This 207-nucleotide RNA was probed chemically with 2A3. For 2A3 the reverse transcriptase was SuperScript II with manganese. It was measured as part of the RMDB library M2RFPK.
RNA sequence: GGGAACGACUCGAGUAGAGUCGAAAAAGUCCUCCAACUGGUUACGACCAGUCGGAGGACAAGGAGGUCAGGGUCAGGAGCCCCCCCCUGAACCCAGGAUAACCCUCAAAGUCGGGGGGCAACCCAAAGGAGCGAUGAAGUUUCGACUUCAUCGCAAGGUAUAAUUAUCGUUCGCGAUAAUUAUACCAAAAGAAACAACAACAACAAC
Reactivity to 2A3 in 0.01 (KOAc 150mM, MgCl2 10mM, bicine 150mM(pH8.5), 24C), signal-to-noise 1, nucleotides 027 to 156: a000g000u000c000c000u000c010c000a010a000c000u000g000g000u090u030a080c200g050a020c090c000a000g000u000c020g000g000a000g000g000a000c000a000a020g090g020a050g000g030u110c090a030g000g010g000u020c000a000g000g020a010g020c000c000c000c000c000c000c000c000u000g020a060a060c000c030c020a000g060g040a070u040a080a040c000c000c020u020c070a030a050a020g100u120c060g000g000g020g000g010g000c000a010a040c040c010c010a000a070a050g240g040a090g060c000g000a000u000g010a000a000g000u040u060u280c220g080a020c020u000u000c000a000u000c000g010c020a000a000